Structure probing data (DMS) for a 177-nucleotide construct.
It was measured as part of the RMDB library TTRINS.
The RNA was probed in 150 mM KOAc, 10 mM MgCl2 and 150 mM bicine (pH 8.5) at 24 C.
RNA sequence: GGGAACGACUCGAGUAGAGUCGAAAAGAUAUGGAUCCAUGCUGUUCUGUCCUUUGAGACAUGCGACUGGAUCGGAAACGAUCCCGUCGCAACAGCUCAUGGGACAGAACAGCAUGGAUCCUAAGUCCGUCUUAACAAUGUUCGCAUUGUUAAGACGAAAAGAAACAACAACAACAAC
Reactivity to DMS in 0.01 (KOAc 150mM, MgCl2 10mM, bicine 150mM(pH8.5), 24C), signal-to-noise 2, nucleotides 027 to 126: g000a100u010a300u000g000g000a000u000c000c000a000u010g010c000u000g000u000u000c010u010g020u010c000c000u000u000u000g010a020g010a030c110a290u010g010c010g000a020c000u020g000g010a010u000c020g000g010a110a090a260c010g000a010u010c010c000c030g000u010c010g000c010a000a030c240a180g000c010u000c010a020u000g010g000g000a010c010a000g000a000a000c020a000g010c000a010u000g000g010a000u000c000c000u000a010a100g010u000c040